[RMDB]
RNA sequence: GGGAACGACUCGAGUAGAGUCGAAAACAUAGGCUCUCUCUUAAGGAGUUGAUGAUGUAUGCCGCUGAUCCAGCCAUGCACAUUGCCUCCUCUAACGCUUUUCUUGAUUUGAGGACAUCAUGUUUUAACAGGACGUGGUUCGCCACGUCCAAAAGAAACAACAACAACAAC
Reactivity to DMS in 0.01 (KOAc 150mM, MgCl2 10mM, bicine 150mM(pH8.5), 24C), signal-to-noise 2, nucleotides 027 to 129: c090a170u040a100g000g060c120u020c020u110c010u020c050u020u050a000a000g010g010a040g010u000u000g020a040u000g020a070u060g040u000a000u030g050c230c130g050c020u010g020a130u080c250c000a080g000c030c050a030u040g020c030a050c000a070u020u020g020c090c020u050c010c010u110c040u060a090a120c180g000c090u030u000u030u000c030u120u130g010a140u050u050u000g030a080g050g040a080c040a150u150c030a000u050g060u020u110u070u080a030a050c110a070
Reactivity to 2A3 in 0.01 (KOAc 150mM, MgCl2 10mM, bicine 150mM(pH8.5), 24C), signal-to-noise 5, nucleotides 027 to 129: c030a020u090a020g020g030c000u010c010u000c000u000c010u050u110a070a020g020g000a000g000u040u020g030a010u030g020a040u010g000u010a000u050g070c130c050g000c030u020g070a300u080c110c020a000g000c000c000a010u000g000c010a020c000a000u000u000g000c000c000u010c000c010u040c070u040a050a030c030g050c030u080u070u070u050c010u060u110g150a240u030u030u090g060a030g010g000a010c000a030u150c020a040u060g050u040u010u000u030a110a050c080a010
Chemical mapping of a 170-nucleotide RNA with DMS and 2A3. Values are in units of 0.01, from 0 to 300, in steps of 10. The reactions ran in a buffer of 150 mM KOAc, 10 mM MgCl2 and 150 mM bicine (pH 8.5), at 24 C. Reactivities are given for positions 27 through 129. It was measured as part of the RMDB library 15KLIB.